[RMDB]
RNA sequence: GGGAACGACUCGAGUAGAGUCGAAAAUGCUUAUGUGCAAAGUGAAGACAAGAGAAUGGGCCACGGACCGUCGGAGCAAAGGCUAUGGGCCGCGAUCAAUAGAUCUCUUCGCUUACCAAAGCUCCGCAUGCGUAUGCCGUUUCGACGGCAUACGCAUAAAAGAAACAACAACAACAAC
Reactivity to DMS in 0.01 (KOAc 150mM, MgCl2 10mM, bicine 150mM(pH8.5), 24C), signal-to-noise 1, nucleotides 027 to 126: u000g060c000u000u050a100u000g050u060g090c130a000a090a000g000u000g000a030a000g000a110c090a180a060g000a070g020a090a080u030g090g000g010c000c000a000c070g030g000a070c130c000g000u050c030g000g000a050g060c010a000a170a240g010g070c090u000a050u020g000g000g010c050c020g100c070g000a020u000c060a190a060u030a000g020a060u020c120u000c000u010u000c050g010c000u000u000a180c000c070a120a060a160g000c000u000c000c000g010c220
Reactivity to 2A3 in 0.01 (KOAc 150mM, MgCl2 10mM, bicine 150mM(pH8.5), 24C), signal-to-noise 2, nucleotides 027 to 126: u100g010c030u110u070a200u260g130u210g020c030a050a000a080g060u020g050a000a040g020a030c050a170a020g110a000g050a120a250u240g020g000g070c000c000a030c010g050g000a100c030c020g030u120c020g020g050a060g000c030a000a000a150g020g000c000u000a040u100g010g000g030c010c010g070c020g000a000u100c000a000a150u060a290g060a050u000c050u000c000u010u040c020g000c000u020u000a050c050c000a010a000a010g000c000u000c000c000g000c000